[RMDB]
RNA sequence: GGGAACGACUCGAGUAGAGUCGAAAAUGCAGCGUGACGUGGGCGCCUGGGCGGGCGGCCAUGAUGCGGGCCCGGGCGGCGUUGCCCUUCUCGAGAUUGCGGACGGCCAACACUACGUGUGCACCGCCUAUAACGCGCGAUUCGUCGCGCGUUAUAGAAAAGAAACAACAACAACAAC
Reactivity to DMS in 0.01 (KOAc 150mM, MgCl2 10mM, bicine 150mM(pH8.5), 24C), signal-to-noise 2, nucleotides 027 to 126: u010g010c040a110g000c010g060u010g010a050c020g010u000g000g000g020c000g010c030c000u000g000g000g010c070g000g000g030c020g020g010c100c020a100u040g020a120u060g030c040g010g030g000c020c010c030g010g000g040c300g020g000c000g000u020u040g000c050c080c060u010u020c030u000c040g010a190g030a080u010u030g000c030g000g050a120c200g050g060c000c030a030a160c030a100c110u000a130c120g040u040g000u010g010c070a110c010c040g000c040
Reactivity to 2A3 in 0.01 (KOAc 150mM, MgCl2 10mM, bicine 150mM(pH8.5), 24C), signal-to-noise 2, nucleotides 027 to 126: u110g020c020a020g010c010g000u020g060a070c070g020u060g060g050g020c030g000c000c010u060g030g030g000c060g080g150g130c050g070g000c020c000a090u150g050a070u160g010c000g000g030g000c000c000c020g010g000g000c000g000g000c030g010u010u070g000c010c000c000u070u040c040u040c020g080a130g020a080u020u140g000c030g020g010a080c090g120g000c000c040a080a040c010a010c070u250a070c100g040u070g010u030g080c020a000c030c000g000c010

An RNA of 177 nucleotides, treated with DMS and 2A3 and read out base by base. DMS adducts were read by reverse transcription with MarathonRT. For 2A3 the reverse transcriptase was SuperScript II with manganese. Source: RMDB library OK1LIB, as collected in RNAgym.